[RMDB]
RNA sequence: GGGAACGACUCGAGUAGAGUCGAAAAGCGCAGGAUUUCGCGGCGAGCGGCAGCGUCGGGCGGUUCAACGAACACCAGCCGUUCUAGCCGCCCCGGGCGCAGCAGCGCCGGGUCUAUCAGAUCGGGCCCAAGAGACCGAGUUCGCUCGGUCUCUUGGAAAAGAAACAACAACAACAAC
Reactivity to DMS in 0.01 (KOAc 150mM, MgCl2 10mM, bicine 150mM(pH8.5), 24C), signal-to-noise 1, nucleotides 027 to 126: g010c080g020c010a110g000g000a100u050u020u010c090g000c140g060g020c000g020a100g000c060g000g030c000a110g000c000g050u000c060g000g000g020c100g000g030u040u010c300a030a090c200g000a010a010c080a110c080c080a060g000c070c050g090u000u040c040u080a060g000c020c040g000c020c000c010c160g030g000g030c030g000c030a060g000c020a080g050c050g000c000c010g000g000g000u020c080u120a090u000c190a070g000a000u000c040g000g020g000c000
Reactivity to 2A3 in 0.01 (KOAc 150mM, MgCl2 10mM, bicine 150mM(pH8.5), 24C), signal-to-noise 2, nucleotides 027 to 126: g000c010g020c020a020g010g050a050u060u180u000c110g030c040g000g010c040g030a080g030c060g040g020c040a060g000c000g120u070c030g020g010g000c020g000g030u080u100c150a140a090c120g050a050a020c060a060c100c040a000g130c040c050g000u020u030c030u070a050g000c010c000g000c000c010c000c040g080g020g000c000g000c010a010g060c040a020g030c010g000c010c020g020g020g000u060c050u070a160u190c010a010g000a060u060c010g030g000g000c000
The record gives the reactivity of an RNA of 177 nucleotides to DMS and 2A3. High DMS reactivity at an A or C suggests that its Watson-Crick edge is free. For 2A3, 1,204 sequencing reads were counted.